[RMDB]
RNA sequence: GGGAACGACUCGAGUAGAGUCGAAAAGACUACAACUUCGGUUGUAGUCAAAUAAAAGCGUGUUCCGACAUCACGGAACAAGUACACGCAUGAAGUAUAAAAAAACCGGUUCCUUCGGGAACCGGAAGAAUAGACUAUGGUUCGCCAUAGUCUAUUCAAAAGAAACAACAACAACAAC
Reactivity to 2A3 in 0.01 (KOAc 150mM, MgCl2 10mM, bicine 150mM(pH8.5), 24C), signal-to-noise 4, nucleotides 027 to 126: g010a000c010u000a000c000a000a000c010u050u110c240g140g000u000u000g000u000a010g000u000c000a010a000a010u020a000a050a000a020g000c010g010u030g020u020u000c000c000g020a040c070a270u210c110a040c080g010g000a030a020c000a020a010g060u020a030c040a000c080g000c040a040u150g110a100a030g160u170a120u270a200a160a020a020a000a020a050c000c010g000g000u000u000c020c000u060u040c180g060g010g010a000a000c010c000g010g000a010a000
Reactivity to DMS in 0.01 (KOAc 150mM, MgCl2 10mM, bicine 150mM(pH8.5), 24C), signal-to-noise 3, nucleotides 027 to 126: g010a020c010u000a000c000a010a000c000u000u010c220g010g010u000u000g000u000a000g010u000c000a010a040a060u000a060a070a120a140g000c020g020u000g020u000u000c000c000g020a260c220a110u010c220a110c020g000g000a020a040c040a040a080g010u010a060c160a040c040g020c030a070u000g000a050a120g010u000a070u020a010a000a100a080a060a140a140c010c000g000g000u000u010c000c000u010u000c170g040g010g010a000a000c010c010g000g000a000a010